Description: Chemical mapping of a 207-nucleotide RNA with DMS and 2A3. For DMS the reverse transcriptase was MarathonRT. The data come from the RNA Mapping Database (RMDB), library OK3TST. The RNA was probed in 150 mM KOAc, 10 mM MgCl2 and 150 mM bicine (pH 8.5) at 24 C. For DMS, 1,799 sequencing reads were counted.
RNA sequence: GGGAACGACUCGAGUAGAGUCGAAAAUAAAGAUGGCGCGGUAGUUGGUGGUGAAUCUGGCGCGUCUCUGGCAAGCCCGACCGCUGGUGUGUACACCGUAACUGUGACUGACUCAUCUACUGACCCUGAAAUUAUUAUCAGCACGGCGUGCACCGUAGCAUUUAGUCUCAUUCGUGAGACUAAAUGCAAAAGAAACAACAACAACAAC
Reactivity to DMS in 0.01 (KOAc 150mM, MgCl2 10mM, bicine 150mM(pH8.5), 24C), signal-to-noise 1, nucleotides 027 to 156: u000a070a090a100g000a040u000g000g010c110g020c020g020g020u010a100g010u000u000g050g040u000g060g000u010g020a060a090u000c020u020g030g000c000g000c040g040u010c040u020c040u000g030g050c100a120a180g010c080c020c010g000a060c030c040g020c040u000g000g050u000g010u010g010u000a150c000a040c000c000g000u020a050a130c020u020g010u010g020a150c140u000g040a020c100u010c000a080u020c020u000a300c030u000g010a220c000c080c040u010g020a090a030a140u000u020a110u010u010a180u020c000a060g000c040a110c020g000g000c040g010u000g010c090a060c020c050g010u000a140
Reactivity to 2A3 in 0.01 (KOAc 150mM, MgCl2 10mM, bicine 150mM(pH8.5), 24C), signal-to-noise 2, nucleotides 027 to 156: u120a000a070a020g020a040u090g000g040c030g000c060g100g100u030a030g020u060u080g060g000u040g000g010u090g020a010a060u000c020u020g050g000c000g020c030g000u000c030u000c030u070g060g000c020a070a070g020c010c010c000g020a050c030c000g000c060u040g010g080u060g000u030g010u050a020c030a010c000c020g010u040a100a020c010u070g040u050g140a060c030u020g050a120c030u000c060a060u010c030u100a090c070u130g090a100c000c010c000u020g080a010a070a040u210u130a160u100u060a060u080c010a020g100c060a050c030g050g000c070g100u160g020c030a040c050c020g020u060a010